[RMDB]
RNA sequence: GGGAACGACUCGAGUAGAGUCGAAAAUAUUGGAUUGGAUGCGGCUGUAGCAUUAGGUCAUCCAGCGGUUAUUUCGACAGCAUUAAUUUUAGUACCUAUCACUGUUUUAUUAGCCGUUAUUUUACCAUAGUCACACAACCUUCGGGUUGUGUGACUAAAAAGAAACAACAACAACAAC
Reactivity to 2A3 in 0.01 (KOAc 150mM, MgCl2 10mM, bicine 150mM(pH8.5), 24C), signal-to-noise 1, nucleotides 027 to 126: u300a020u000u150g000g130a070u040u000g140g020a000u030g040c000g110g000c090u050g020u020a030g050c000a000u040u040a010g070g000u130c040a040u000c040c000a040g000c000g090g000u000u000a220u110u020u060c010g070a070c050a000g070c000a030u000u290a040a290u050u180u090u250a060g040u100a170c000c000u090a040u170c040a070c060u060g080u050u080u020u020a090u010u180a000g000c010c000g000u140u010a150u000u010u000u010a000c000c000a000